[RMDB]
RNA sequence: GGGAACGACUCGAGUAGAGUCGAAAAGAUAUGGACGGAUGUGGAGAGACGUGUCGGAAACGACAUGCAUCUCUAUGAAGCAUACCGUCCUAAGUCAAAACGCCCAGACCGUUCGCGGUCUGGGCGAGGCAUGUUAACAGUUCGCUGUUAACAUGCCAAAAGAAACAACAACAACAAC
Reactivity to DMS in 0.01 (KOAc 150mM, MgCl2 10mM, bicine 150mM(pH8.5), 24C), signal-to-noise 1, nucleotides 027 to 126: g000a000u000a030u000g000g000a030c020g000g000a010u000g060u010g000g030a000g000a010g020a090c050g030u000g020u030c000g030g000a010a000a030c000g040a000c000a000u000g060c300a260u000c000u000c000u010a300u080g000a180a300g000c020a000u000a070c000c000g000u000c000c030u000a000a090g000u000c000a150a040a140a200c040g000c000c000c000a010g000a020c000c000g010u000u010c300g000c010g010g020u010c000u000g000g000g070c010g000a000
Chemical mapping of a 177-nucleotide RNA with DMS. Conditions: 150 mM KOAc, 10 mM MgCl2 and 150 mM bicine (pH 8.5), 24 C. For DMS, 711 sequencing reads were counted. Reactivities are given for positions 27 through 126. DMS adducts were read by reverse transcription with MarathonRT.